An RNA of 177 nucleotides, treated with DMS and 2A3 and read out base by base. Source: RMDB library M2PK50, as collected in RNAgym. The RNA was probed in 150 mM KOAc, 10 mM MgCl2 and 150 mM bicine (pH 8.5) at 24 C. For DMS, 3,091 sequencing reads were counted. Values cover nucleotides 27 to 126.
RNA sequence: GGGAACGACUCGAGUAGAGUCGAAAAUACGCGAGGUUCGCCUCGCGUAAAAGAGGAGCGUAAACGUGUGCGUACGUAGUGCUGUACAUCGUUCCUACACGAAUGCACAUGGUUUCGACCAUGUGAAGAUAGCCUUUGUGUUCGCACAAAGGCUAUCAAAAGAAACAACAACAACAAC
Reactivity to DMS in 0.01 (KOAc 150mM, MgCl2 10mM, bicine 150mM(pH8.5), 24C), signal-to-noise 3, nucleotides 027 to 126: u000a000c010g000c010g010a030g000g000u000u000c210g000c000c000u000c000g010c010g010u000a000a010a100a080g000a050g020g010a080g000c030g020u010a050a070a050c100g000u010g020u010g030c060g010u010a020c080g010u000a130g010u000g020c020u010g020u000a030c040a070u000c040g010u010u000c010c010u000a090c210a090c150g010a090a080u020g000c010a000c000a000u000g010g010u000u000u030c210g000a020c000c000a010u010g010u000g010a060a060
Reactivity to 2A3 in 0.01 (KOAc 150mM, MgCl2 10mM, bicine 150mM(pH8.5), 24C), signal-to-noise 4, nucleotides 027 to 126: u050a000c000g000c000g000a000g000g010u040u100c180g110c030c000u000c000g000c000g000u010a000a000a000a010g140a030g020g010a030g000c010g040u120a050a140a130c110g040u040g000u020g060c030g000u030a040c030g150u130a050g020u070g060c100u140g030u030a010c010a060u050c010g010u030u010c000c000u020a020c070a000c060g180a130a060u270g000c010a000c000a000u000g020g000u000u120u130c140g030a020c010c000a000u010g000u010g000a010a010